[RMDB]
RNA sequence: GGGAACGACUCGAGUAGAGUCGAAAAGAAAUUACGUUUCCUUUACACUUCUCAAACCGGGAUCAAGAGAAGCAAAGCAUCCCUCAUAUCCACGAUGGAGGGUGUCGUGGAGUAUACUGUACCUAAAAGAGCGAACACGGCUUCGGCCGUGUUCGAACCAAGCCAAAAGCUUCGGCUUUUGGCUUGGAAAAGAAACAACAACAACAAC
Reactivity to 2A3 in 0.01 (KOAc 150mM, MgCl2 10mM, bicine 150mM(pH8.5), 24C), signal-to-noise 1, nucleotides 027 to 156: g020a000a080a000u120u120a030c070g010u030u040u070c000c000u080u050u120a030c070a030c010u030u040c000u010c020a090a130a140c040c090g050g020g000a060u020c020a180a030g020a000g000a090a060g120c130a000a000a000g040c030a070u060c000c020c010u110c060a130u110a040u060c020c020a000c040g030a010u000g090g000a040g050g030g030u040g000u010c000g000u000g010g000a040g000u000a010u000a060c060u070g060u110a100c020c000u100a210a180a000a000g140a010g040c010g060a000a000c000a000c000g020g020c000u020u020c220g010g010c000c000g000u000g000u000u000c000g000a000a000